[RMDB]
RNA sequence: GGGAACGACUCGAGUAGAGUCGAAAACGACGUCGAGAUCGCCGGCUGCCCGCCGACACCCGCGGCCAUCAUGGCGGCGCUGCGAUCGGUGACCGGGAAAUGACCGCUGCACCGACGGCCGGCGGGGGCGGGGAGAAAGUUUCGACUUUCUCCCCGCAAAAGAAACAACAACAACAAC
Reactivity to DMS in 0.01 (KOAc 150mM, MgCl2 10mM, bicine 150mM(pH8.5), 24C), signal-to-noise 2, nucleotides 027 to 126: c120g000a070c060g000u000c040g020a100g030a100u020c050g010c030c000g020g000c000u030g000c000c020c000g010c030c000g000a120c150a200c100c150c010g010c010g010g010c030c000a060u020c130a110u030g010g010c000g000g000c010g010c170u000g020c010g000a060u000c000g000g000u000g030a200c300c040g000g030g000a090a160a160u010g020a100c000c000g010c060u040g010c000a040c000c000g030a030c060g010g010c030c010g000g010c000g000g000g000g000
Reactivity to 2A3 in 0.01 (KOAc 150mM, MgCl2 10mM, bicine 150mM(pH8.5), 24C), signal-to-noise 3, nucleotides 027 to 126: c020g010a000c030g040u030c020g010a000g040a200u020c010g010c040c000g000g030c040u070g080c010c020c000g000c010c010g030a040c000a080c060c000c020g010c010g070g000c010c010a130u190c100a130u300g020g020c040g030g020c030g000c020u090g040c020g150a210u010c000g000g020u030g030a130c010c000g000g050g070a130a160a150u250g070a040c050c000g030c080u150g000c010a020c010c000g010a030c000g020g000c000c000g000g000c010g000g000g000g010